[RMDB]
RNA sequence: GGGAACGACUCGAGUAGAGUCGAAAAUGUUGAAGGUAAGGACGGAUUUGUCAGUGUAGAGCUACAACCUCCUUGCAAAUUCUUGAUUGCGGGACCAAAAGGACCUGAAAUCCGAUAUCUCUAUUUUGCCACCGGGAGUUCGCUCCCGGUAAAAGAAACAACAACAACAAC
Reactivity to DMS in 0.01 (KOAc 150mM, MgCl2 10mM, bicine 150mM(pH8.5), 24C), signal-to-noise 3, nucleotides 027 to 129: u020g040u000u000g010a140a140g060g030u060a030a020g030g020a000c100g050g110a110u050u000u000g010u000c090a000g040u000g070u090a000g000a150g070c040u010a110c070a000a040c040c000u000c010c010u030u000g030c080a030a050a040u030u010c060u000u070g010a060u000u000g000c050g030g010g030a160c080c070a140a080a250a200g000g030a070c040c050u030g000a000a000a000u020c040c300g030a140u060a140u150c050u020c050u010a070u050u020u010u000g000c050c130